[RMDB]
RNA sequence: GGGAACGACUCGAGUAGAGUCGAAAAUUCUCAAUUAAUUUAGUCAUUACAAAUCAUGACAUAAAACUUACAUUACAUAUAUCAACAUGUUCCGCUACAAAACAUAUUCAGUAUAUGUAUAGAGGAUAAGCAAACAGCUUUUCGAAGCUGUUUGCUUAAAAGAAACAACAACAACAAC
Reactivity to 2A3 in 0.01 (KOAc 150mM, MgCl2 10mM, bicine 150mM(pH8.5), 24C), signal-to-noise 1, nucleotides 027 to 126: u010u000c020u000c030a020a090u290u160a000a160u080u210u230a050g000u010c000a000u000u130a050c140a150a060a100u300c000a000u000g000a000c000a010u140a070a080a050a070c060u100u080a020c020a130u060u060a030c000a000u030a050u100a000u110c000a000a000c000a010u000g000u000u040c060c000g010c200u140a010c050a020a000a000a000c000a000u060a020u050u000c000a000g050u050a030u000a000u000g000u000a000u020a000g020a030g140g060a100u000